[RMDB]
RNA sequence: GGGAACGACUCGAGUAGAGUCGAAAAUGCUGCUUCCUCCGUGGGUAUGAAGGGAAGGAGGGGAGAGUGAGCGCGCACCGCGAGUCACUCUUCCUGCGGGUGUGAUGCGCGCGGUGGGCUGCGACUGAUCGAUCCGUGAUUUCGAUCACGGAUCGAUAAAAGAAACAACAACAACAAC
Reactivity to 2A3 in 0.01 (KOAc 150mM, MgCl2 10mM, bicine 150mM(pH8.5), 24C), signal-to-noise 3, nucleotides 027 to 126: u120g000c010u010g000c000u150u100c010c000u010c000c030g090u120g000g070g000u160a130u240g130a130a100g060g070g050a100a090g050g060a090g000g030g000g000a030g020a000g030u040g010a030g030c030g000c010g070c040a070c030c110g000c000g020a040g120u070c000a010c010u020c000u040u080c010c000u030g020c090g030g020g000u110g050u090g070a090u060g000c050g010c020g000c020g100g000u060g010g030g000c080u110g000c010g030a100c050u090g050
Reactivity to DMS in 0.01 (KOAc 150mM, MgCl2 10mM, bicine 150mM(pH8.5), 24C), signal-to-noise 1, nucleotides 027 to 126: u020g000c010u000g000c010u030u020c000c000u000c060c020g030u010g010g010g000u000a120u060g000a120a120g010g000g000a200a090g000g030a260g010g000g000g000a010g000a000g000u010g000a040g040c050g000c010g000c020a090c210c100g000c060g000a090g010u010c000a020c010u000c010u000u020c000c000u010g000c070g000g000g020u050g000u000g000a040u000g000c080g060c040g010c000g050g040u000g010g010g000c020u000g000c060g000a130c100u000g000

The record gives the reactivity of an RNA of 177 nucleotides to 2A3 and DMS. The 2A3 profile rests on 2,120 reads. The reactions ran in a buffer of 150 mM KOAc, 10 mM MgCl2 and 150 mM bicine (pH 8.5), at 24 C.